[RMDB]
RNA sequence: GGGAACGACUCGAGUAGAGUCGAAAAGAUAUGGAUUCUCAUUUAAUGACAUCGAUCUCGGAAACGAGGGAGUCAUCCAAUGAGGAAUCCUAAGUCAAACAGUUAGGUACUUCGGUACCUAACUGAAGUACCCCCUAAUCUUCGGAUUAGGGGGUACAAAAGAAACAACAACAACAAC
Reactivity to 2A3 in 0.01 (KOAc 150mM, MgCl2 10mM, bicine 150mM(pH8.5), 24C), signal-to-noise 2, nucleotides 027 to 126: g000a030u030a020u120g020g010a000u020u000c030u000c030a030u000u030u050a080a020u000g010a000c030a300u300c170g090a160u050c010u000c000g030g060a110a110a130c020g000a040g040g010g010a000g000u010c000a010u010c020c050a020a000u050g030a060g090g150a060a020u000c000c010u010a110a050g130u050c040a070a070a120c020a070g010u010u010a000g020g000u010a010c010u040u050c300g110g000u000a010c030c000u000a000a000c010u020g000a020a000
Reactivity to DMS in 0.01 (KOAc 150mM, MgCl2 10mM, bicine 150mM(pH8.5), 24C), signal-to-noise 1, nucleotides 027 to 126: g030a070u010a300u000g000g000a000u010u010c000u030c010a000u000u000u010a060a020u000g010a010c000a300u000c110g010a100u000c000u030c010g010g000a050a160a210c010g000a000g010g000g000a010g010u000c000a010u010c110c160a010a050u000g010a040g030g000a020a010u000c000c010u010a040a150g000u000c040a100a150a210c010a000g000u000u000a000g000g000u010a010c000u000u000c140g010g010u000a000c000c010u000a000a000c000u000g000a020a110

This 177-nucleotide RNA was probed chemically with 2A3 and DMS. The reactions ran in a buffer of 150 mM KOAc, 10 mM MgCl2 and 150 mM bicine (pH 8.5), at 24 C. Reactivities are given for positions 27 through 126. For 2A3, 1,854 sequencing reads were counted. 2A3 adducts were read by reverse transcription with SuperScript II with manganese.